[RMDB]
RNA sequence: GGGAACGACUCGAGUAGAGUCGAAAAUGAUGGGCUCCUCCGAGCAGGUGUGUUGUACCUGCCCUCCACCUGGUCAAUACAGAGGUGGACUUUGGGCACUGCUUCCUGAAGUACCCGUAUGAGAAAACACUCCAGCUUGCCAAUCAAGAUGACCUCAUGAUAAAUUUACGUUCGCGUAAAUUUAUCAAAAAGAAACAACAACAACAAC
Reactivity to DMS in 0.01 (KOAc 150mM, MgCl2 10mM, bicine 150mM(pH8.5), 24C), signal-to-noise 2, nucleotides 027 to 156: u000g000a060u010g010g010g030c130u000c020c010u000c040c030g000a090g050c030a080g000g020u010g020u000g050u000u010g010u010a080c010c020u000g020c010c050c030u000c010c010a040c010c000u000g020g020u010c070a140a190u010a180c090a130g000a030g020g030u010g000g010a010c040u000u000u000g010g020g030c060a300c050u000g010c040u000u010c070c040u000g000a090a060g030u010a060c020c010c020g040u010a100u000g000a100g010a100a040a070a070c020a090c010u000c000c000a060g010c030u010u000g030c010c060a080a080u000c060a060a120g000a130u000g000a120c020c000u000c030a250
Reactivity to 2A3 in 0.01 (KOAc 150mM, MgCl2 10mM, bicine 150mM(pH8.5), 24C), signal-to-noise 2, nucleotides 027 to 156: u090g010a050u090g010g000g030c070u070c040c020u000c000c060g030a030g010c030a010g010g040u030g020u010g000u060u030g040u060a030c010c000u040g020c000c000c020u040c000c000a020c000c010u040g030g100u140c110a190a100u120a210c050a090g140a010g030g020u000g000g000a020c010u140u170u020g000g000g010c020a020c090u090g040c030u050u050c020c030u050g100a050a020g010u030a060c000c010c030g050u090a080u220g080a090g010a010a080a000a000c030a010c010u000c000c000a000g040c000u030u070g020c050c010a050a100u060c030a060a020g020a120u070g040a030c000c030u050c060a030
This 207-nucleotide RNA was probed chemically with DMS and 2A3. Conditions: 150 mM KOAc, 10 mM MgCl2 and 150 mM bicine (pH 8.5), 24 C. The 2A3 profile rests on 982 reads.